[RMDB]
RNA sequence: GGGAACGACUCGAGUAGAGUCGAAAAGCGAUCAGGUAGGAGGUCUGCACCCAGGAAAUUUCAUCGGUGCUGGCGCCAAGGCCCGCCUGAAUUUCGGAGAGCGAGGCCGAGACAAUCUGGAUGUCGACUGCUGGAUAGCAUUCGUGCUAUCCAGCAGAAAAGAAACAACAACAACAAC
Reactivity to 2A3 in 0.01 (KOAc 150mM, MgCl2 10mM, bicine 150mM(pH8.5), 24C), signal-to-noise 1, nucleotides 027 to 126: g020c000g030a040u060c020a010g000g060u060a010g080g000a010g000g030u030c030u100g030c010a030c000c000c000a030g120g030a030a150a140u250u270u130c110a090u090c010g040g000u020g030c020u000g010g000c020g000c000c010a040a030g040g000c010c000c020g000c000c000u020g060a140a100u060u130u000c090g010g050a080g020a010g040c040g030a160g010g000c000c000g010a010g000a000c030a040a050u000c010u050g060g020a070u090g020u110c030g040a060
Reactivity to DMS in 0.01 (KOAc 150mM, MgCl2 10mM, bicine 150mM(pH8.5), 24C), signal-to-noise 2, nucleotides 027 to 126: g020c050g020a070u000c030a040g000g020u000a080g020g000a120g000g010u000c010u000g040c000a010c010c000c090a160g000g010a040a130a090u000u040u010c060a090u000c300g000g000u000g010c000u000g000g020c020g000c050c050a110a220g010g000c030c020c000g040c000c030u030g000a020a150u000u000u000c070g000g020a080g000a100g010c000g010a060g010g010c000c000g030a190g000a070c070a030a070u000c040u020g000g000a140u000g020u000c050g010a190
The record gives the reactivity of an RNA of 177 nucleotides to 2A3 and DMS.
Source: RMDB library OK2TST, as collected in RNAgym.
The 2A3 profile rests on 1,073 reads.
Reactivities are given for positions 27 through 126.
In probing experiments dimethyl sulfate is read out at A N1 and C N3, which are open when not base-paired.